Notes: An RNA of 207 nucleotides, treated with 2A3 and DMS and read out base by base. For 2A3 the reverse transcriptase was SuperScript II with manganese. Conditions: 150 mM KOAc, 10 mM MgCl2 and 150 mM bicine (pH 8.5), 24 C. For DMS, 1,247 sequencing reads were counted.
RNA sequence: GGGAACGACUCGAGUAGAGUCGAAAAUUCUACACUGCUGGUGGGAAUGUAAACUAGUACAACCACUAUGGAAAAUAGUGUGGAGAUUCCUUAAAGAACUACAAGUAGAACUCUCAUUUGAUCCAGCAAUCCCACUAGUGGGUAACUAUCCAGAGAAGCUAGCUUUAAUUUUCGAAUUAAAGCUAGCAAAAGAAACAACAACAACAAC
Reactivity to 2A3 in 0.01 (KOAc 150mM, MgCl2 10mM, bicine 150mM(pH8.5), 24C), signal-to-noise 2, nucleotides 027 to 156: u000u010c010u020a050c120a060c070u010g010c000u000g040g000u000g000g000g020a030a030u010g020u060a080a120a140c070u040a030g020u090a040c040a150a050c110c000a010c020u020a070u030g010g050a030a090a050a020u070a050g000u010g040u100g070g000a010g020a070u000u080c000c000u010u030a110a090a050g060a160a040c040u090a030c200a120a010g030u050a020g040a080a010c010u000c000u000c040a030u020u000u070g020a040u000c000c000a000g020c010a030a030u010c000c010c000a000c000u000a000g030u020g010g020g000u010a030a010c050u050a030u050c020c070a010g300a030g080a270a010
Reactivity to DMS in 0.01 (KOAc 150mM, MgCl2 10mM, bicine 150mM(pH8.5), 24C), signal-to-noise 1, nucleotides 027 to 156: u000u000c010u000a050c060a010c030u030g030c040u000g000g070u010g000g060g040a110a070u000g040u000a040a080a210c070u000a180g000u010a110c070a180a200c120c040a000c010u020a010u090g020g020a050a160a090a180u000a020g060u000g050u020g050g000a080g000a140u000u000c000c020u000u000a090a110a100g050a050a240c030u000a140c110a060a150g000u000a060g030a160a150c080u030c010u010c010a150u000u030u030g010a170u000c000c120a060g000c000a040a120u000c020c000c000a050c040u010a050g040u000g020g000g070u000a050a100c040u000a030u000c020c020a160g030a140g020a090a220
For DMS the reverse transcriptase was MarathonRT.